RNA sequence: GGGAACGACUCGAGUAGAGUCGAAAACGUAGAUACUUCGGUAUCUACGAAAAUAACGCUGGCGUGGGACACAGCCGGAGCUACCCUCGGAUAGUCUCAGUAAAACAGCAUGGUUCGCCAUGCUGAAGAAUUGAGAGUACUUCGGUACUCUCAAUUCAAAAGAAACAACAACAACAAC
Reactivity to DMS in 0.01 (KOAc 150mM, MgCl2 10mM, bicine 150mM(pH8.5), 24C), signal-to-noise 4, nucleotides 027 to 126: c010g010u000a000g010a010u000a010c000u000u020c160g030g000u000a000u010c000u000a010c000g000a010a040a060a080u020a120a130c200g020c040u010g010g010c040g020u000g010g010g000a050c060a070c070a110g000c030c030g010g010a060g020c070u000a090c040c030c010u010c100g020g010a110u010a080g000u000c020u000c020a100g010u000a060a060a100a160c010a000g000c000a010u000g000g010u000u000c210g020c010c000a010u000g000c000u000g000a030a070
Reactivity to 2A3 in 0.01 (KOAc 150mM, MgCl2 10mM, bicine 150mM(pH8.5), 24C), signal-to-noise 3, nucleotides 027 to 126: c000g000u000a000g000a000u000a000c000u040u060c270g100g010u000a000u000c000u000a000c000g000a010a000a000a010u060a040a020c060g000c080u030g040g020c050g090u080g000g030g030a020c020a010c020a090g010c010c000g040g010a020g030c040u080a080c000c010c000u020c010g030g010a040u040a100g030u000c000u000c030a040g100u160a010a130a040a040c000a000g000c000a000u010g020g000u030u050c150g020c050c000a000u000g000c000u000g000a010a010
Conditions: 150 mM KOAc, 10 mM MgCl2 and 150 mM bicine (pH 8.5), 24 C. An RNA of 177 nucleotides, treated with DMS and 2A3 and read out base by base. The data come from the RNA Mapping Database (RMDB), library M2PK50. For DMS the reverse transcriptase was MarathonRT. For 2A3 the reverse transcriptase was SuperScript II with manganese.